[RMDB]
RNA sequence: GGGAACGACUCGAGUAGAGUCGAAAAUUUGCAGGCAUCAAAACUGAGCUUUUAAAGCCAGAGUUUCAUGCCUCUUGGCUAAUAUUUUGGUUUAUCUUGCAUAGCUAAAAUUUGUAACAAUAAUGUCCUUUCUUAGCUAGUUCGCUAGCUAAGAAAGAAAAGAAACAACAACAACAAC
Reactivity to DMS in 0.01 (KOAc 150mM, MgCl2 10mM, bicine 150mM(pH8.5), 24C), signal-to-noise 3, nucleotides 027 to 126: u010u010u000g010c140a040g010g010c030a010u000c160a040a020a050a060c000u000g000a150g020c010u010u000u010u000a070a110a040g020c000c010a020g000a130g000u000u000u000c250a010u000g010c020c000u000c060u000u010g030g020c070u020a060a050u020a040u010u010u000u010g010g020u000u000u000a020u000c020u010u010g030c140a010u010a020g010c010u000a010a000a020a020u000u010u000g010u000a060a100c080a070a070u000a080a110u010g010u000c090
Reactivity to 2A3 in 0.01 (KOAc 150mM, MgCl2 10mM, bicine 150mM(pH8.5), 24C), signal-to-noise 3, nucleotides 027 to 126: u040u060u140g010c050a000g000g000c010a000u010c020a020a000a000a040c010u000g040a130g110c020u170u130u050u300a210a150a000g000c020c000a000g040a070g060u010u010u030c020a010u020g000c000c020u000c010u030u060g050g020c030u030a080a080u050a170u150u040u030u010g040g000u050u300u100a040u050c040u020u160g010c040a030u010a010g000c010u030a000a010a020a070u120u100u080g080u070a060a050c050a050a060u120a190a090u180g060u070c000

The record gives the reactivity of an RNA of 177 nucleotides to DMS and 2A3. Values cover nucleotides 27 to 126. The data come from the RNA Mapping Database (RMDB), library OK2TRN. 2A3 adducts were read by reverse transcription with SuperScript II with manganese. Conditions: 150 mM KOAc, 10 mM MgCl2 and 150 mM bicine (pH 8.5), 24 C.